[RMDB]
RNA sequence: GGGAACGACUCGAGUAGAGUCGAAAAGAUAUGGACGAGGAGGGAAGCAUCGAUCUGUGAUCGGAAACGAUCACAGGGAGCUUGCCUCUCGUCCUAAGUCAAAACUGAAGGGCUUCGGCCCUUCAGACGUGUGUCCAUAGUUCGCUAUGGACACACGAAAAGAAACAACAACAACAAC
Reactivity to 2A3 in 0.01 (KOAc 150mM, MgCl2 10mM, bicine 150mM(pH8.5), 24C), signal-to-noise 1, nucleotides 027 to 126: g040a000u070a040u110g010g040a000c040g040a070g300g140a070g000g010g100a010a040g000c030a130u300c020g040a050u010c000u000g000u000g000a000u000c020g060g000a030a040a010c000g020a010u000c000a000c000a000g010g000g030a000g000c010u070u120g130c010c010u070c000u030c000g000u030c000c000u000a000a000g060u040c000a000a000a110a200c020u000g010a000a000g010g000g000c030u060u250c300g140g000c000c000c000u000u000c000a000g000a000
Reactivity to DMS in 0.01 (KOAc 150mM, MgCl2 10mM, bicine 150mM(pH8.5), 24C), signal-to-noise 1, nucleotides 027 to 126: g050a040u000a300u000g000g000a010c020g000a070g020g020a070g010g000g000a040a040g020c000a300u000c170g020a030u000c000u000g040u020g020a020u010c000g000g000a050a080a110c000g020a000u000c000a000c000a030g000g000g000a030g000c010u000u000g010c000c000u000c000u010c010g030u000c000c000u020a000a050g020u010c020a120a090a090a230c010u000g020a010a020g030g020g000c010u020u000c130g060g040c010c020c000u000u000c000a010g010a090